[RMDB]
RNA sequence: GGGAACGACUCGAGUAGAGUCGAAAACAGUUAUGUGCGUCCCUCCCGAAGCUGCGCGCUCGGUCGAAGAGGACGACCAUCGCCGAUAGAGGACGACCGGUCUUCGGUCAAGGGAAUAUGAGUAAAACCCAUAUUCUGGGUUCGCCCAGAAUAUGGGAAAAGAAACAACAACAACAAC
Reactivity to DMS in 0.01 (KOAc 150mM, MgCl2 10mM, bicine 150mM(pH8.5), 24C), signal-to-noise 2, nucleotides 027 to 126: c090a050g000u010u000a050u000g010u020g010c010g040u000c000c000c010u000c020c000c010g010a090a130g020c030u010g040c110g040c110g000c080u000c050g000g000u000c150g000a120a160g010a150g020g010a030c030g010a020c020c020a050u000c080g000c070c010g000a120u000a050g010a120g010g000a060c050g000a080c050c040g010g000u000c090u000u000c020g020g010u000c050a040a110g000g000g010a070a060u000a060u000g000a120g000u000a050a060a060a130
Reactivity to 2A3 in 0.01 (KOAc 150mM, MgCl2 10mM, bicine 150mM(pH8.5), 24C), signal-to-noise 2, nucleotides 027 to 126: c010a000g020u100u100a100u180g120u160g060c000g020u020c000c000c000u020c050c010c030g020a080a030g010c040u060g060c090g030c020g040c160u030c020g000g030u120c050g020a100a050g040a070g000g020a010c010g000a010c000c000a020u040c010g000c030c020g010a000u070a180g110a060g010g060a050c040g000a010c010c030g060g090u090c170u210u180c070g000g000u020c010a030a020g090g000g030a020a020u090a090u160g070a050g080u070a020a090a050a080